Background:
Chemical mapping of a 177-nucleotide RNA with 2A3 and DMS.
RNA sequence: GGGAACGACUCGAGUAGAGUCGAAAAUAUUGGCGCGGUUAAUCUCGUCAAUCGCGAGCAAAUACUUGUGGUCCGGGUCGUUCUGGGCACGAUUGCAGAUAUCUUUGAAGAUGCCAUCUACGACCUCGCUAUUCAUGCCUUUCGAGGCAUGAAUAGCAAAAGAAACAACAACAACAAC
Reactivity to 2A3 in 0.01 (KOAc 150mM, MgCl2 10mM, bicine 150mM(pH8.5), 24C), signal-to-noise 2, nucleotides 027 to 126: u160a050u010u070g030g000c030g010c010g040g050u030u200a100a120u240c020u050c110g080u030c000a000a010u050c070g010c010g020a050g050c020a020a090a140u080a060c030u110u070g050u120g210g000u000c030c050g000g000g000u000c000g000u020u000c030u010g010g000g000c070a020c060g040a030u010u170g000c000a030g090a250u070a110u170c100u140u210u280g050a060a020g050a060u050g010c010c020a020u030c030u050a060c090g010a020c000c010u050c020
Reactivity to DMS in 0.01 (KOAc 150mM, MgCl2 10mM, bicine 150mM(pH8.5), 24C), signal-to-noise 1, nucleotides 027 to 126: u030a090u010u010g020g020c010g060c170g010g030u020u000a040a190u020c020u000c030g020u000c000a000a010u020c180g000c070g010a090g010c070a030a010a130u000a040c030u000u000g030u010g000g000u000c050c020g000g050g000u000c000g010u000u010c010u000g040g000g030c010a060c080g000a140u000u000g020c100a080g000a150u000a090u010c040u000u040u000g020a090a030g000a180u000g000c020c020a030u020c090u000a060c070g000a120c020c020u000c140

Annotation: Values cover nucleotides 27 to 126. Conditions: 150 mM KOAc, 10 mM MgCl2 and 150 mM bicine (pH 8.5), 24 C. Source: RMDB library OK2TST, as collected in RNAgym.